[RMDB]
RNA sequence: GGGAACGACUCGAGUAGAGUCGAAAAGACGUCGGAUCGACUAGUGAUCGAUCACACAUGGUACCAUGGUCAUGGACGUACUGAUCUCAUGCUAGAUGCAGUACCAGCUGCUAGCUAGGUGCUCAUGCUGCGAAAACGGAUUCGUCCGUUUUCGCAGAAAAGAAACAACAACAACAAC
Reactivity to 2A3 in 0.01 (KOAc 150mM, MgCl2 10mM, bicine 150mM(pH8.5), 24C), signal-to-noise 2, nucleotides 027 to 126: g040a000c030g010u030c060g050g010a020u000c010g010a040c020u060a070g120u020g180a190u000c000g010a010u000c000a000c020a000c010a060u050g090g010u110a130c090c040a100u130g020g000u100c020a040u080g050g010a000c020g000u080a180c010u020g030a030u010c020u000c050a080u160g080c030u150a090g000a120u040g000c040a020g010u030a070c030c020a010g000c000u250g050c070u020a060g050c000u050a110g030g000u020g000c000u030c030a030u080g100
Reactivity to DMS in 0.01 (KOAc 150mM, MgCl2 10mM, bicine 150mM(pH8.5), 24C), signal-to-noise 2, nucleotides 027 to 126: g000a030c050g010u010c020g010g000a020u000c000g020a000c000u010a160g020u010g000a190u020c000g010a020u000c000a150c210a150c060a070u000g010g000u010a080c070c060a080u010g030g000u010c100a080u010g000g060a120c060g020u000a070c030u000g010a090u010c000u000c060a100u010g030c110u010a030g010a100u000g020c200a020g000u000a050c030c020a000g020c010u000g010c130u000a050g010c000u000a070g010g020u000g000c000u030c050a060u000g030

Overview: Structure probing data (2A3 and DMS) for a 177-nucleotide construct. For 2A3 the reverse transcriptase was SuperScript II with manganese. For DMS, 1,758 sequencing reads were counted. The RNA was probed in 150 mM KOAc, 10 mM MgCl2 and 150 mM bicine (pH 8.5) at 24 C.